[RMDB]
RNA sequence: GGGAACGACUCGAGUAGAGUCGAAAAAUGGUCUGAUAUUAUCUGUCAGUAUUUAUGGAGAGGAGCUUCAACACACUCACGAUUUAUGCUUAAUCUCACUUUUGACUGCAAGAUAAAUCUUAGUGUCCUACACAACAACCUUCUUGAAGACCAGUGAGAGUCAUUAUGAGUUCGCUCAUAAUGACUCAAAAGAAACAACAACAACAAC
Reactivity to DMS in 0.01 (KOAc 150mM, MgCl2 10mM, bicine 150mM(pH8.5), 24C), signal-to-noise 3, nucleotides 027 to 156: a100u000g000g010u010c030u000g000a120u000a110u010u000a100u000c110u000g010u010c030a080g020u000a050u010u000u000a060u010g020g010a140g000a090g020g010a130g040c080u000u020c090a080a020c110a060c050a060c030u010c090a090c100g030a140u000u010u020a040u010g000c020u010u000a100a180u010c010u000c020a040c100u000u000u000u000g010a040c020u000g020c230a080a060g000a030u000a010a010a060u010c040u010u000a090g030u010g000u000c030c020u000a120c120a060c070a070a060c050a050a090c020c020u020u010c030u000u010g010a070a070g000a020c020c020a040g020u000g000a180
Reactivity to 2A3 in 0.01 (KOAc 150mM, MgCl2 10mM, bicine 150mM(pH8.5), 24C), signal-to-noise 7, nucleotides 027 to 156: a010u040g020g010u000c020u020g030a030u050a130u140u050a030u020c030u040g140u110c020a010g020u040a110u050u170u050a120u170g040g000a010g000a010g040g040a010g010c020u070u090c090a090a050c030a020c020a020c090u110c050a100c100g050a050u030u080u090a060u120g040c000u030u070a100a110u070c020u030c010a130c090u080u070u090u150g070a040c010u020g010c040a060a060g010a020u010a020a050a010u000c000u030u070a050g010u020g020u050c020c040u080a050c060a000c000a030a150c020a030a040c010c020u070u150c030u060u120g060a050a000g010a020c000c010a010g000u050g050a080